Structure probing data (DMS and 2A3) for a 207-nucleotide construct. It was measured as part of the RMDB library OK3TST. DMS adducts were read by reverse transcription with MarathonRT. The RNA was probed in 150 mM KOAc, 10 mM MgCl2 and 150 mM bicine (pH 8.5) at 24 C. Values cover nucleotides 27 to 156.
RNA sequence: GGGAACGACUCGAGUAGAGUCGAAAAGAUGGAGGGUCCGGCCUCGGACGCCUCCUAUAAGAUGUAACUAUUACGAGGCCAUUAAUGGCGUUUUCGCCUAGGUGCACGUCGGCGUGCGUGCCACCGUAAGACUUAAUGAAUAACACGCCGGAUACAAACUAUAAUGCUGGUUCGCCAGCAUUAUAGUAAAAGAAACAACAACAACAAC
Reactivity to DMS in 0.01 (KOAc 150mM, MgCl2 10mM, bicine 150mM(pH8.5), 24C), signal-to-noise 2, nucleotides 027 to 156: g000a140u000g000g000a060g000g060g010u000c010c030g000g010c040c040u000c010g000g020a000c030g000c000c000u040c000c000u000a000u000a120a120g000a180u020g000u020a110a140c110u010a190u000u000a080c010g000a010g030g000c020c000a290u000u000a040a060u000g000g010c000g010u010u000u010u010c030g050c000c020u000a140g050g030u000g030c010a000c040g020u010c000g020g000c010g140u000g000c030g020u000g020c040c050a020c030c060g000u000a090a090g000a090c110u010u000a060a110u000g040a080a120u000a040a070c060a020c000g020c010c020g040g010a200u000a110c080a100a170
Reactivity to 2A3 in 0.01 (KOAc 150mM, MgCl2 10mM, bicine 150mM(pH8.5), 24C), signal-to-noise 2, nucleotides 027 to 156: g140a050u090g010g010a010g000g010g020u010c010c060g030g010c000c000u030c000g000g010a020c030g030c050c000u040c000c000u000a000u020a000a000g020a040u070g070u140a060a080c060u030a060u210u060a070c000g000a000g000g000c000c000a010u040u100a100a090u060g000g000c030g140u080u040u210u300c030g000c000c000u000a040g020g000u000g000c000a000c000g020u020c020g010g000c000g000u000g000c010g010u000g000c010c050a020c000c000g050u000a080a000g030a010c020u040u090a020a020u180g100a130a030u130a210a010c000a000c020g020c030c000g000g000a020u070a060c100a000a150